This 177-nucleotide RNA was probed chemically with DMS and 2A3.
The reactions ran in a buffer of 150 mM KOAc, 10 mM MgCl2 and 150 mM bicine (pH 8.5), at 24 C.
The 2A3 profile rests on 1,893 reads.
It was measured as part of the RMDB library M2PK50.
For DMS, 1,290 sequencing reads were counted.
RNA sequence: GGGAACGACUCGAGUAGAGUCGAAAAGCCGAAGAGUUCGCUCUUCGGCGACGAAUUUGGCGUAGAAGAGAGUCUACAGUACUAGCCAUCCCAGAUGUACAAAUAAGCAUUGCUUCGGCAAUGCUAACUGUUCCCCAUGAUUCGUCAUGGGGAACAGAAAAGAAACAACAACAACAAC
Reactivity to DMS in 0.01 (KOAc 150mM, MgCl2 10mM, bicine 150mM(pH8.5), 24C), signal-to-noise 2, nucleotides 027 to 126: g020c010c010g000a000a010g020a030g040u000u030c190g020c000u000c020u010u010c020g000g010c000g000a040c120g000a070a090u000u000u000g020g010c000g000u000a020g010a080a150g010a130g010a150g060u010c020u000a010c020a110g030u000a040c050u000a250g030c000c010a040u000c000c000c000a160g000a090u000g000u010a030c080a060a060a120u000a120a010g030c000a010u000u000g010c000u000u000c140g020g010c000a010a010u000g000c010u010a010a060
Reactivity to 2A3 in 0.01 (KOAc 150mM, MgCl2 10mM, bicine 150mM(pH8.5), 24C), signal-to-noise 2, nucleotides 027 to 126: g020c000c000g000a000a000g040a000g010u080u120c180g000c090u000c000u010u000c000g010g050c010g000a010c020g110a060a110u100u110u150g000g000c030g010u020a010g000a170a020g300a020g040a040g240u000c010u010a030c000a030g010u040a010c020u030a000g000c030c010a030u010c000c000c020a020g030a080u080g010u010a030c030a030a080a030u180a140a000g000c010a010u000u010g000c010u040u040c140g040g000c000a000a000u010g000c010u010a010a000